[RMDB]
RNA sequence: GGGAACGACUCGAGUAGAGUCGAAAAUUUAGUUGUUCAUGAAAAAUGGCUCUGACACACCCAAAUAAAGGAAACCGAAUCUAGACAUUAGGGAUGCUUUAACUAAUUGGCAAGCUAGCUAAUUUGGCUUAAUGAGUUCUUUGCCUAGUACUUAAAACAUAGUCCGAUUAUUCGUAAUCGGACUAUGAAAAGAAACAACAACAACAAC
Reactivity to DMS in 0.01 (KOAc 150mM, MgCl2 10mM, bicine 150mM(pH8.5), 24C), signal-to-noise 2, nucleotides 027 to 156: u010u000u000a080g020u000u000g000u010u000c010a130u010g020a040a100a120a120a090u000g010g080c030u000c030u000g000a140c020a070c050a160c020c010c020a030a090a160u020a070a100a100g020g010a110a070a100c050c030g000a080a100u000c020u000a030g020a040c020a040u000u000a130g020g010g000a040u000g000c040u000u010u000a030a040c020u000a040a070u020u000g000g000c020a100a160g030c220u010a170g030c010u000a010a040u000u000u000g050g000c060u000u000a020a020u010g000a060g000u000u010c050u000u000u010g000c010c000u000a040g000u000a080c080u000u010a040a080a100a190

The record gives the reactivity of an RNA of 207 nucleotides to DMS.
The DMS profile rests on 4,162 reads.
The data come from the RNA Mapping Database (RMDB), library OK3TST.
The reactions ran in a buffer of 150 mM KOAc, 10 mM MgCl2 and 150 mM bicine (pH 8.5), at 24 C.